This 207-nucleotide RNA was probed chemically with DMS and 2A3.
[RMDB]
RNA sequence: GGGAACGACUCGAGUAGAGUCGAAAAGGGAUGGUUUCGACCAUCCCAAAAAAACCUUUGUGAAUGCUUCGCGAUAAGCCUGGUGGCCCAUUGGGCCAGAAGGGCUUUUGACGCGAACAUUCACUCUGGUAAAAAGUAGAGGGUUCGCCCUCUACAACGCAUAGGAUCUAUUCGUAGAUCCUAUGCGAAAAGAAACAACAACAACAAC
Reactivity to DMS in 0.01 (KOAc 150mM, MgCl2 10mM, bicine 150mM(pH8.5), 24C), signal-to-noise 1, nucleotides 027 to 156: g030g080g020a050u000g000g030u000u010u010c300g030a010c000c000a040u000c110c000c000a000a000a020a100a000a040a030c000c000u040u010u000g030u000g010a050a000u000g060c100u000u000c000g030c010g000a260u000a020a010g000c000c000u000g000g030u010g050g000c000c000c020a300u010u010g080g000g000c000c000a010g000a300a300g000g010g000c040u000u030u000u020g030a230c060g050c010g030a000a060c000a000u000u000c040a000c010u000c020u000g010g030u010a040a130a090a090a110g000u010a040g010a020g000g000g000u000u000c110g010c040c000c000u010c000u000a010c010a020a100
Reactivity to 2A3 in 0.01 (KOAc 150mM, MgCl2 10mM, bicine 150mM(pH8.5), 24C), signal-to-noise 2, nucleotides 027 to 156: g010g000g000a040u040g000g040u070u140u270c240g040a030c000c010a000u040c010c000c000a010a000a010a000a030a000a010c030c010u030u000u010g000u000g000a020a000u010g010c160u000u000c000g000c010g060a060u020a100a010g030c010c020u070g090g010u010g040g020c020c010c100a300u150u300g000g000g010c000c000a000g020a000a010g000g000g000c000u010u000u000u030g040a010c000g000c000g000a000a000c000a000u000u000c000a000c000u000c010u000g040g000u090a050a170a060a040a040g020u000a010g000a000g020g000g000u080u130c210g200c030c000c000u000c000u010a000c010a020a000
The RNA was probed in 150 mM KOAc, 10 mM MgCl2 and 150 mM bicine (pH 8.5) at 24 C. 2A3 adducts were read by reverse transcription with SuperScript II with manganese. DMS adducts were read by reverse transcription with MarathonRT. Reactivities are given for positions 27 through 156.